[RMDB]
RNA sequence: GGGAACGACUCGAGUAGAGUCGAAAAAGUAUAGGGUGUGACACGUGACCAAUGCCGAAAGAUUAAGGCAAGGGGUUAGCCGCAAGGCGAAGCUCUAAACCCAAGUCCCGGUGAAUGUCGGCCGUAAUAUUACACCCUUUUUCGAAAGGGUGUAAUAAAAAGAAACAACAACAACAAC
Reactivity to DMS in 0.01 (KOAc 150mM, MgCl2 10mM, bicine 150mM(pH8.5), 24C), signal-to-noise 9, nucleotides 027 to 126: a080g010u010a070u030a070g000g010g020u010g000u010g020a050c050a070c080g010u010g010a120c020c040a060a100u010g010c020c010g010a090a090a110g010a070u010u010a150a130g000g000c020a040a230g010g010g000g010u000u000a290g010c000c000g010c290a050a100g010g020c010g000a080a130g010c010u000c010u000a040a190a140c040c010c030a050a110g000u000c030c070c030g000g000u000g000a100a080u010g000u000c020g000g000c020c030g010u010a080a130
Reactivity to 2A3 in 0.01 (KOAc 150mM, MgCl2 10mM, bicine 150mM(pH8.5), 24C), signal-to-noise 6, nucleotides 027 to 126: a010g170u160a090u140a090g080g030g000u070g050u070g070a020c030a000c110g040u040g020a040c030c020a060a060u080g020c010c010g050a110a130a020g080a050u140u120a070a050g000g000c000a010a060g000g010g000g030u200u020a010g000c000c010g010c030a010a010g000g000c010g000a010a010g000c000u000c000u010a110a100a040c000c000c000a000a020g030u020c000c020c030g000g010u050g040a120a070u100g010u040c000g010g020c010c000g030u040a080a090
An RNA of 177 nucleotides, treated with DMS and 2A3 and read out base by base. The reactions ran in a buffer of 150 mM KOAc, 10 mM MgCl2 and 150 mM bicine (pH 8.5), at 24 C.